[RMDB]
RNA sequence: GGGAACGACUCGAGUAGAGUCGAAAAGGGGUCACUCGGGACUCAUGGAGAUCCCAGGCUGAAGCCUCCACGGCCUUGGAUCGUUGAAAUGAGUUCUCUAGCGUGGUGACGGAGGCACCCAAACAUGUCCCAACUGGUUCGCCAGUUGGGACAUGAACUGAAUAUAGUAGUUCGCUACUAUAUUCAGAAAAGAAACAACAACAACAAC
Reactivity to 2A3 in 0.01 (KOAc 150mM, MgCl2 10mM, bicine 150mM(pH8.5), 24C), signal-to-noise 6, nucleotides 027 to 156: g050g010g010g000u010c010a000c060u120c170g040g020g000a000c000u010c000a000u010g040g010a020g000a010u000c020c010c020a000g000g000c000u020g020a050a010g020c000c000u000c000c000a040c010g000g000c000c000u000u000g000g010a000u000c020g160u250u030g010a010a000a000u010g000a000g010u070u010c010u000c020u050a130g060c130g230u300g030g000u010g020a000c000g000g000a000g000g010c010a020c000c000c000a040a110a020c000a000u000g000u000c000c000c000a000a000c010u000g010g060u070u070c170g040c100c010a000g000u000u000g000g000g000a000c000a000u000g000a000a010
Reactivity to DMS in 0.01 (KOAc 150mM, MgCl2 10mM, bicine 150mM(pH8.5), 24C), signal-to-noise 3, nucleotides 027 to 156: g020g010g070g020u000c020a020c020u000c060g010g000g000a060c010u000c000a030u000g010g000a080g000a020u000c000c000c040a040g000g000c000u000g020a040a080g000c010c000u000c010c010a300c040g010g010c000c000u000u000g010g010a020u000c010g010u010u010g010a150a210a030u000g010a070g020u000u000c000u000c070u000a120g030c130g010u000g020g010u000g000a080c020g020g020a030g040g040c010a020c020c010c000a130a130a270c000a010u000g000u000c000c000c000a000a020c000u000g020g000u000u000c300g030c030c000a020g020u010u000g010g000g000a000c010a000u010g000a050a250
An RNA of 207 nucleotides, treated with 2A3 and DMS and read out base by base. The DMS profile rests on 10,315 reads. For 2A3, 14,903 sequencing reads were counted. The data come from the RNA Mapping Database (RMDB), library RNAMAK. The RNA was probed in 150 mM KOAc, 10 mM MgCl2 and 150 mM bicine (pH 8.5) at 24 C.